[RMDB]
RNA sequence: GGGAACGACUCGAGUAGAGUCGAAAAGAUAUGGAUAGUGUGGUGGGAGAAGAUCGAAUCGGAAACGAUUCAAUCUUCUUUGAUCACCCACUAUCCUAAGUCAAACUGUAGAGUUCGCUCUACAGAACGACAUACCAUACUUCGGUAUGGUAUGUCGAAAAGAAACAACAACAACAAC
Reactivity to DMS in 0.01 (KOAc 150mM, MgCl2 10mM, bicine 150mM(pH8.5), 24C), signal-to-noise 2, nucleotides 027 to 126: g000a030u000a300u010g000g000a040u010a000g020u000g000u020g050g000u040g000g020g020a010g010a030a000g020a000u010c040g000a020a020u000c000g020g000a140a120a200c000g010a010u000u000c000a030a000u020c000u000u000c000u000u000u020g020a090u000c000a000c000c000c000a020c010u000a010u000c000c000u000a020a080g020u010c030a150a130a260c010u000g010u000a010g020a020g020u010u020c300g010c000u000c010u000a000c000a000g010a070a170
Reactivity to 2A3 in 0.01 (KOAc 150mM, MgCl2 10mM, bicine 150mM(pH8.5), 24C), signal-to-noise 2, nucleotides 027 to 126: g050a010u090a000u140g000g020a000u000a020g000u070g180u300g100g000u000g020g000g020a110g000a010a000g000a010u050c070g000a000a000u010c000g000g050a090a020a020c020g000a000u010u010c020a000a010u010c000u020u000c000u120u040u100g070a030u020c000a000c000c000c010a000c010u000a000u000c000c000u000a000a000g020u010c040a060a050a150c000u010g000u030a010g010a020g020u050u120c300g050c120u000c010u010a000c000a000g010a060a030